Annotation
Chemical mapping of a 177-nucleotide RNA with DMS and 2A3.
[RMDB]
RNA sequence: GGGAACGACUCGAGUAGAGUCGAAAAUACGAACGCUGGCGGCGUGCUUAACACGUACAAGUCGAACGAUGAAGCCCAUCGGGAUGGAUUAGUGGCGAACGGGAGAGUAACACGUGGGCAAUCUGCCAAAAUUAUAUAAAUUCGUUUAUAUAAUUUUAAAAGAAACAACAACAACAAC
Reactivity to DMS in 0.01 (KOAc 150mM, MgCl2 10mM, bicine 150mM(pH8.5), 24C), signal-to-noise 5, nucleotides 027 to 126: u040a090c110g000a080a080c050g020c080u010g020g020c020g000g030c040g010u000g010c040u030u030a120a150c030a020c050g000u020a070c110a120a110g020u000c020g030a300a230c020g000a050u010g000a160a240g000c040c020c040a000u020c020g030g010g020a130u050g000g010a030u020u020a040g010u020g000g010c040g000a150a080c050g010g000g000a300g000a040g000u000a080a160c170a030c050g010u010g000g000g000c010a100a060u010c040u010g000c070c020
Reactivity to 2A3 in 0.01 (KOAc 150mM, MgCl2 10mM, bicine 150mM(pH8.5), 24C), signal-to-noise 3, nucleotides 027 to 126: u140a020c030g030a090a010c070g000c060u040g050g020c010g000g000c000g000u010g010c010u150u090a120a030c000a000c030g010u060a040c010a090a050g080u020c020g030a020a000c010g080a120u060g070a030a010g010c000c000c000a010u040c000g050g100g070a100u130g050g000a020u110u110a100g050u140g090g020c040g010a020a010c020g020g020g000a070g010a000g020u070a050a030c040a000c100g010u040g030g010g000c040a040a050u030c040u080g050c010c000

Overview:
The reactions ran in a buffer of 150 mM KOAc, 10 mM MgCl2 and 150 mM bicine (pH 8.5), at 24 C. For 2A3 the reverse transcriptase was SuperScript II with manganese.